[RMDB]
RNA sequence: GGGAACGACUCGAGUAGAGUCGAAAACGAAAAUAACGACAAGGUGCACGGAGCGUGGUCGGCGGUGGAUCGGGCACUCGAACGAUUUGGCCAACGCGUCACCGAUCAUCUCUCUCCGUCUACUGUUAAACGACUCGUGGCCGGGAACGGAAAAGCCCGUAGGAGUAUAGUUCGCUAUACUCCUACGAAAAGAAACAACAACAACAAC
Reactivity to DMS in 0.01 (KOAc 150mM, MgCl2 10mM, bicine 150mM(pH8.5), 24C), signal-to-noise 1, nucleotides 027 to 156: c040g020a110a020a120a120u000a090a110c030g040a110c050a060a070g000g030u030g050c050a090c000g010g000a160g030c060g000u000g040g020u000c030g010g000c040g000g020u010g030g030a050u010c030g010g020g010c000a060c070u020c040g000a160a070c090g000a200u020u000u010g020g020c050c100a070a130c080g000c060g020u000c050a080c010c000g000a040u000c030a080u010c050u020c050u000c000u000c000c020g020u000c010u000a060c000u000g000u000u020a100a100a150c050g010a010c030u000c050g000u010g010g020c010c000g070g000g000a100a100c010g000g010a030a090a110a110g010c080c110
Reactivity to 2A3 in 0.01 (KOAc 150mM, MgCl2 10mM, bicine 150mM(pH8.5), 24C), signal-to-noise 4, nucleotides 027 to 156: c030g050a010a010a030a080u200a080a040c070g060a030c070a090a080g050g010u130g060c070a010c040g090g030a020g000c010g010u020g000g010u010c030g000g000c020g000g030u040g050g010a030u040c030g000g010g000c070a040c080u080c070g060a090a040c050g080a120u080u050u150g060g000c000c000a100a060c060g030c050g040u020c020a030c020c000g000a010u020c010a080u020c030u010c020u010c000u000c050c000g000u010c000u040a020c000u000g040u100u100a110a220a010c020g070a090c030u030c020g010u040g030g010c010c020g030g000g010a120a050c030g020g030a090a150a040a030g110c080c100